An RNA of 177 nucleotides, treated with DMS and 2A3 and read out base by base. It was measured as part of the RMDB library TTRDEL. Values cover nucleotides 27 to 126.

[RMDB]
RNA sequence: GGGAACGACUCGAGUAGAGUCGAAAAGAUAUGGACUCACGAGGGAGAAGGUCGGAAACGAUCCUUCAUCGAUCUCGAGAGUCCUAAGUCAAAGAGAUUUUACAUCCUUCGGGAUGUAAAAUCUCAACAAAUUAUGCUAGUUCGCUAGCAUAAUUUGAAAAGAAACAACAACAACAAC
Reactivity to DMS in 0.01 (KOAc 150mM, MgCl2 10mM, bicine 150mM(pH8.5), 24C), signal-to-noise 8, nucleotides 027 to 126: g010a050u000a300u000g010g010a010c010u000c000a130c010g010a030g000g000g010a050g010a020a010g010g010u000c000g000g010a070a060a190c010g000a010u010c020c010u000u000c010a220u000c150g000a050u010c000u000c000g010a070g000a030g000u000c000c000u000a000a060g010u000c050a080a110a130g000a010g010a010u000u000u000u000a000c000a000u000c000c000u000u010c220g030g010g010a000u000g000u000a000a000a000a000u000c000u000c000a050a120
Reactivity to 2A3 in 0.01 (KOAc 150mM, MgCl2 10mM, bicine 150mM(pH8.5), 24C), signal-to-noise 5, nucleotides 027 to 126: g030a000u070a030u140g000g000a000c000u000c010a020c020g010a000g010g030g010a030g010a010a010g010g010u010c010g010g040a070a060a020c020g020a060u300c070c010u030u020c020a090u290c010g030a040u010c010u000c010g060a080g000a000g000u000c000c010u000a010a000g030u010c040a010a140a070g000a000g000a000u010u000u000u000a000c000a000u010c000c000u030u100c300g100g000g000a000u000g000u000a000a000a000a000u000c000u000c000a000a010